Source: RMDB library M2PK50, as collected in RNAgym. This 177-nucleotide RNA was probed chemically with 2A3 and DMS. For DMS the reverse transcriptase was MarathonRT. High DMS reactivity at an A or C suggests that its Watson-Crick edge is free. Values cover nucleotides 27 to 126.

RNA sequence: GGGAACGACUCGAGUAGAGUCGAAAAGAUAACGCGUUCGCGCGUUAUCAAAUAAACUUGACAAAUGCCGGUCAUGAAAAACGGCAUUAUAAGAUUGCUGAAAAAGAUAUAACUUCGGUUAUAUCAACAAUACAGAAGUCUUCGGACUUCUGUAUUGAAAAGAAACAACAACAACAAC
Reactivity to 2A3 in 0.01 (KOAc 150mM, MgCl2 10mM, bicine 150mM(pH8.5), 24C), signal-to-noise 2, nucleotides 027 to 126: g000a000u000a000a000c000g030c010g000u020u050c190g000c000g000c000g100u000u010a000u000c010a000a030a000u030a000a020a000c050u040u060g040a010c020a040a090a000u020g020c000c000g040g060u110c060a060u300g140a080a120a080a000a010c010g000g000c000a000u010u020a010u000a000a020g110a140u110u300g060c060u130g110a050a000a040a070a150g000a000u020a000u000a020a010c010u030u080c130g060g000u000u000a020u000a000u020c010a000a040
Reactivity to DMS in 0.01 (KOAc 150mM, MgCl2 10mM, bicine 150mM(pH8.5), 24C), signal-to-noise 2, nucleotides 027 to 126: g010a010u000a000a020c000g010c010g030u000u010c190g030c000g050c000g000u000u000a000u000c000a020a090a140u000a070a100a140c060u000u000g010a050c050a100a050a000u010g010c000c000g000g020u010c050a100u000g000a080a070a070a050a090c000g010g010c010a000u000u000a080u010a150a100g000a180u000u000g010c130u010g000a070a050a100a070a080g000a020u010a010u000a000a000c000u000u010c190g030g000u000u000a010u000a000u000c010a080a140
Annotation
The RNA was probed in 150 mM KOAc, 10 mM MgCl2 and 150 mM bicine (pH 8.5) at 24 C.